[RMDB]
RNA sequence: GGGAACGACUCGAGUAGAGUCGAAAAUAGACUGCAAUUAGUUUUUUGGAAUGAAAUACAGACAAAGCCAUAACAUCUAUAGAACUACAUAUUACCCUACAAUAUUGUCUGAUACAAAACAGUCUGGAAAUAUUCUUACAGCGAAAUUGCAAAUGUAACCACUAUGAGUAUUCGUACUCAUAGUGGUAAAAGAAACAACAACAACAAC
Reactivity to DMS in 0.01 (KOAc 150mM, MgCl2 10mM, bicine 150mM(pH8.5), 24C), signal-to-noise 3, nucleotides 027 to 156: u010a110g020a100c050u000g010c000a050a040u000u010a190g000u000u000u000u000u000u030g050g010a070a050u000g000a120a070a130u000a120c010a050g020a090c010a060a090a210g020c050c140a070u000a080a150c050a070u010c060u000a130u020a100g010a080a120c090u000a140c080a100u000a090u000u000a090c060c010c020u010a060c070a090a120u000a070u000u000g000u000c020u000g020a160u000a170c060a100a140a080a100c010a070g010u000c030u000g020g010a060a020a140u000a060u000u000c030u000u000a070c060a030g000c010g000a060a060a070u000u000g030c010a030a110a120u000g010u010a160
Reactivity to 2A3 in 0.01 (KOAc 150mM, MgCl2 10mM, bicine 150mM(pH8.5), 24C), signal-to-noise 5, nucleotides 027 to 156: u090a020g080a030c050u020g000c000a000a030u030u010a060g030u000u010u040u050u120u160g040g050a030a020u030g020a150a060a050u110a050c010a000g030a010c030a050a120a020g040c050c040a070u080a140a060c020a060u090c040u130a090u050a160g090a070a040c020u100a020c050a060u050a070u060u060a120c040c010c020u050a040c050a070a060u030a050u080u090g020u000c030u030g030a040u040a140c060a010a070a050a010c020a020g010u000c000u000g000g010a060a060a010u070a020u050u010c020u030u070a040c040a020g000c010g040a050a040a030u010u010g000c000a020a010a120u110g020u060a030